The record gives the reactivity of an RNA of 207 nucleotides to 2A3. For 2A3, 639 sequencing reads were counted. The RNA was probed in 150 mM KOAc, 10 mM MgCl2 and 150 mM bicine (pH 8.5) at 24 C. It was measured as part of the RMDB library VIROID. Values cover nucleotides 27 to 156.

[RMDB]
RNA sequence: GGGAACGACUCGAGUAGAGUCGAAAAGAUUUUCUUCUUAACCUUCCGGAGAUCUCUCUCGAGUUCCUCUAACUUCUUUCUUCCAUCUACCCACUGCUCGAGGAUCUGCUCUCUGCCCCCGCGGUUCUUCCUCGACUCGGACCGGCUCAUCUCGACACCGUAACAUAAUCUUCGGAUUAUGUUACGGAAAAGAAACAACAACAACAAC
Reactivity to 2A3 in 0.01 (KOAc 150mM, MgCl2 10mM, bicine 150mM(pH8.5), 24C), signal-to-noise 1, nucleotides 027 to 156: g030a050u050u140u140u130c040u120u060c020u130u160a130a120c020c010u110u160c070c070g040g040a070g010a210u000c000u000c000u010c000u020c050g010a010g020u040u040c000c040u080c050u020a140a190c070u090u050c040u070u180u020c000u110u010c040c000a100u010c020u070a140c020c020c000a080c100u050g000c000u030c030g020a010g010g060a120u010c010u070g070c010u000c000u010c050u080g110c000c040c000c000c010g050c010g000g050u020u000c010u020u010c040c010u030c060g040a050c000u010c030g040g020a000c000c020g010g060c040u040c000a080u020c010u020c040g050a020c010a000